[RMDB]
RNA sequence: GGGAACGACUCGAGUAGAGUCGAAAAUCCCUUUCAGGCGUCGAUCGAACAUAAUACGCCCCCGGUUUGCACACCGGGAAUCCAGGAGAGUUCAUGUACAAAACAGGGAGAUGUUCGCAUCUCCCUGGUCUGAGACAUUGUUCGCAAUGUCUCAGACAAAAGAAACAACAACAACAAC
Reactivity to DMS in 0.01 (KOAc 150mM, MgCl2 10mM, bicine 150mM(pH8.5), 24C), signal-to-noise 1, nucleotides 027 to 126: u000c000c030c010u000u020u000c100a160g010g000c020g000u000c070g000a070u010c110g000a010a060c060a150u000a050a240u000a040c000g000c000c030c000c000c000g010g000u000u010u000g060c230a090c200a260c000c000g000g000g000a040a000u010c140c150a180g000g010a150g000a090g000u000u000c010a130u020g030u010a070c100a020a050a160a260c060a000g000g010g000a010g020a010u000g040u000u030c220g030c000a000u000c000u000c000c000c000u000g000
The record gives the reactivity of an RNA of 177 nucleotides to DMS. It was measured as part of the RMDB library RFMREP. Reactivities are given for positions 27 through 126. For DMS the reverse transcriptase was MarathonRT. The RNA was probed in 150 mM KOAc, 10 mM MgCl2 and 150 mM bicine (pH 8.5) at 24 C.